[RMDB]
RNA sequence: GGGAACGACUCGAGUAGAGUCGAAAAGCUUGGAUCUUCGGAUCCAAGCAAAAAAACCUUUGUGCCAUUGUCAGCUCGUAUAGGACCCAUUGGGUCCGUACCAGAGCUUGGAUUUAUGGCACUCUGGUAAAAAACCACAGGAUUCGUCCUGUGGUAACAGUUCUUAAUUCUUCGGAAUUAAGAACUGAAAAGAAACAACAACAACAAC
Reactivity to 2A3 in 0.01 (KOAc 150mM, MgCl2 10mM, bicine 150mM(pH8.5), 24C), signal-to-noise 1, nucleotides 027 to 156: g010c010u000u000g020g000a000u000c010u030u090c290g100g000a000u040c010c000a000a000g000c020a040a000a000a000a000a000a000c000c000u000u000u000g000u000g000c000c000a020u030u000g030u040c010a010g010c000u010c000g000u050a080u110a300g000g000a010c050c010c060a250u120u300g010g010g000u000c020c000g000u010a000c030c150a100g000a010g030c000u010u050g000g010a060u030u190u300a010u000g000g010c000a000c000u000c000u000g000g030u030a080a110a020a020a050a050c000c010a020c000a000g010g000a030u090u110c100g080u030c040c000u000g000u020g010g000u000a000a000
Reactivity to DMS in 0.01 (KOAc 150mM, MgCl2 10mM, bicine 150mM(pH8.5), 24C), signal-to-noise 1, nucleotides 027 to 156: g020c010u000u000g030g010a030u000c030u010u000c300g050g010a030u000c030c000a030a010g040c000a020a000a040a050a050a060a020c000c000u010u000u000g000u010g010c000c000a080u000u010g030u010c010a030g030c010u010c020g030u000a030u000a090g150g010a020c000c000c010a300u010u030g140g050g020u000c000c000g000u000a000c030c070a230g010a030g030c030u000u020g040g000a080u010u000u010a070u010g000g030c000a010c010u000c000u000g000g000u010a000a110a080a040a090a040c000c010a040c000a030g010g010a050u000u010c220g000u000c000c000u000g050u000g010g010u000a000a020